This 177-nucleotide RNA was probed chemically with DMS and 2A3.
RNA sequence: GGGAACGACUCGAGUAGAGUCGAAAAGUUUGUUGGGCUCAUGGCUUUGAAUUAACGUCUGCAUCAUACUUUUGCAAGAUAGGUAAGGAACAGAAGUGUUGCAUGUGCAAUAGACGCGCUGCAGCGUACUUAGUCUUCAGUUCGCUGAAGACUAAGUAAAAGAAACAACAACAACAAC
Reactivity to DMS in 0.01 (KOAc 150mM, MgCl2 10mM, bicine 150mM(pH8.5), 24C), signal-to-noise 4, nucleotides 027 to 126: g010u000u010u010g020u000u010g000g000g030c060u000c060a060u010g010g010c040u000u000u000g010a120a060u000u000a060a050c120g000u010c040u000g020c050a050u000c060a060u010a060c070u010u010u010u000g030c110a060a070g010a090u010a060g010g010u010a050a090g020g010a080a220c060a050g010a080a060g010u000g040u010u000g010c030a030u000g020u000g000c030a070a160u010a140g010a110c110g010c030g030c040u000g010c050a070g000c030g010u000
Reactivity to 2A3 in 0.01 (KOAc 150mM, MgCl2 10mM, bicine 150mM(pH8.5), 24C), signal-to-noise 2, nucleotides 027 to 126: g020u050u090u080g040u030u040g070g010g000c010u040c050a050u050g040g000c020u040u060u120g030a080a070u090u030a080a040c040g010u020c000u030g020c000a040u030c000a030u100a120c030u040u130u050u040g000c000a070a070g040a140u070a030g050g040u020a020a040g060g030a030a010c000a020g070a060a000g080u040g010u070u030g000c050a020u190g040u000g020c010a000a110u050a180g090a070c070g000c000g000c010u030g010c000a020g000c000g000u020
For DMS the reverse transcriptase was MarathonRT. It was measured as part of the RMDB library 15KREP. Conditions: 150 mM KOAc, 10 mM MgCl2 and 150 mM bicine (pH 8.5), 24 C.